[RMDB]
This 177-nucleotide RNA was probed chemically with DMS and 2A3. It was measured as part of the RMDB library OK2TRN. For DMS, 1,372 sequencing reads were counted. 2A3 adducts were read by reverse transcription with SuperScript II with manganese. Conditions: 150 mM KOAc, 10 mM MgCl2 and 150 mM bicine (pH 8.5), 24 C.
RNA sequence: GGGAACGACUCGAGUAGAGUCGAAAAAACACGAAUAUUCGCGCGGAAAUUCUGCAAAUGCAUACACGAAGCAGUCUUCAUCGUCAGAACGCGAUCCGCCGAACGACGACAGAAGCUCGUGAGCUGACACUAUGAGGGUCUUCGGACCCUCAUAGUGAAAAGAAACAACAACAACAAC
Reactivity to DMS in 0.01 (KOAc 150mM, MgCl2 10mM, bicine 150mM(pH8.5), 24C), signal-to-noise 3, nucleotides 027 to 126: a110a070c070a040c080g020a100a120u000a130u000u000c050g010c120g010c070g020g000a070a080a150u010u000c030u010g020c140a080a100a060u000g010c030a070u000a160c070a030c070g010a010a080g020c060a050g000u000c020u000u000c050a130u000c010g000u000c010a030g020a100a150c280g010c040g030a120u000c130c120g080c000c020g010a240a180c150g000a020c010g010a040c110a170g010a030a050g010c060u010c000g030u000g030a090g020c000u020g000a110
Reactivity to 2A3 in 0.01 (KOAc 150mM, MgCl2 10mM, bicine 150mM(pH8.5), 24C), signal-to-noise 1, nucleotides 027 to 126: a000a020c100a040c050g020a060a010u080a080u230u110c060g000c000g010c100g250g030a040a120a030u200u040c030u060g090c070a040a000a090u110g000c010a030u060a250c020a020c030g030a090a020g070c040a070g040u030c030u060u030c010a040u010c010g000u000c000a020g010a060a000c010g040c010g100a200u080c030c080g050c010c000g040a050a010c040g040a000c000g020a010c000a100g040a020a010g000c010u000c010g020u010g040a040g000c050u000g020a010